Background: Structure probing data (2A3 and DMS) for a 177-nucleotide construct. In probing experiments dimethyl sulfate is read out at A N1 and C N3, which are open when not base-paired. For DMS the reverse transcriptase was MarathonRT. The RNA was probed in 150 mM KOAc, 10 mM MgCl2 and 150 mM bicine (pH 8.5) at 24 C.

RNA sequence: GGGAACGACUCGAGUAGAGUCGAAAAAUGAUGGCUAGGAGUAACAUGCUUGAUAAGACUUCGGGUUUUGAUGAAUCUGUGACAAUGUGCACGAAUCUUUGUCAAGAAUGUCAUCAUGAGAGUCAGAUAGCAUGGAUGGGUUCGCCCAUCCAUGCUAAAAAGAAACAACAACAACAAC
Reactivity to 2A3 in 0.01 (KOAc 150mM, MgCl2 10mM, bicine 150mM(pH8.5), 24C), signal-to-noise 1, nucleotides 027 to 126: a000u060g070a000u000g000g000c060u080a170g000g120a070g020u050a060a020c010a110u130g030c050u030u060g030a020u050a100a180g020a010c040u030u020c100g090g020g070u000u140u000u160g060a070u030g050a020a050u070c020u160g190u020g050a020c040a050a080u080g000u110g040c060a010c070g040a040a050u070c100u100u040u060g020u020c000a000a000g070a030a020u140g020u040c000a000u000c000a020u020g030a060g000a020g070u000c010a010g000a150
Reactivity to DMS in 0.01 (KOAc 150mM, MgCl2 10mM, bicine 150mM(pH8.5), 24C), signal-to-noise 1, nucleotides 027 to 126: a110u020g000a130u010g000g020c010u010a110g010g010a150g010u010a080a120c110a050u000g000c020u000u000g000a120u000a040a040g000a020c020u000u000c070g010g000g020u000u000u000u020g030a070u020g000a090a100u000c080u010g000u000g060a020c040a070a030u000g010u000g020c050a100c110g030a080a120u000c030u000u000u000g020u000c000a040a000g010a060a040u000g000u000c020a000u010c010a010u000g000a170g000a160g000u000c020a060g010a220